[RMDB]
Overview
Chemical mapping of a 177-nucleotide RNA with DMS and 2A3. DMS adducts were read by reverse transcription with MarathonRT. The RNA was probed in 150 mM KOAc, 10 mM MgCl2 and 150 mM bicine (pH 8.5) at 24 C. For DMS, 11,573 sequencing reads were counted.
RNA sequence: GGGAACGACUCGAGUAGAGUCGAAAAGCAGGUGGGGCCAGGGAUGUGGGGUGUGGCCCUGGGUAGGGGGCUCUGAGCCCCAUAAACAGGCAGAUCUUAAGCCAGAGGACCAGCCUGGGUCUCGAGCAUCUUAACUUAUCUUCGGAUAAGUUAAGAUAAAAGAAACAACAACAACAAC
Reactivity to DMS in 0.01 (KOAc 150mM, MgCl2 10mM, bicine 150mM(pH8.5), 24C), signal-to-noise 7, nucleotides 027 to 126: g020c050a050g010g020u010g000g010g010g010c030c040a100g010g000g010a080u000g030u000g010g000g020g030u000g020u010g000g000c050c010c000u000g000g010g020u000a110g010g000g000g010g010c010u010c220u010g010a170g000c010c000c000c010a020u000a010a080a120c080a060g010g010c060a100g010a060u000c100u000u010a070a130g020c040c060a090g000a140g000g000a070c020c010a080g000c020c010u000g010g010g000u000c020u000c020g000a130g000c170
Reactivity to 2A3 in 0.01 (KOAc 150mM, MgCl2 10mM, bicine 150mM(pH8.5), 24C), signal-to-noise 3, nucleotides 027 to 126: g060c020a020g000g070u100g030g080g010g040c040c030a030g020g040g010a070u090g040u080g090g020g010g000u080g050u080g040g010c000c000c000u010g020g010g030u070a060g020g010g000g000g000c000u000c040u100g070a040g010c010c000c000c010a010u030a000a030a000c010a010g030g000c020a010g020a140u060c030u120u110a080a040g010c000c010a050g040a070g070g010a030c000c010a000g000c000c010u020g020g020g000u000c020u010c010g000a030g020c010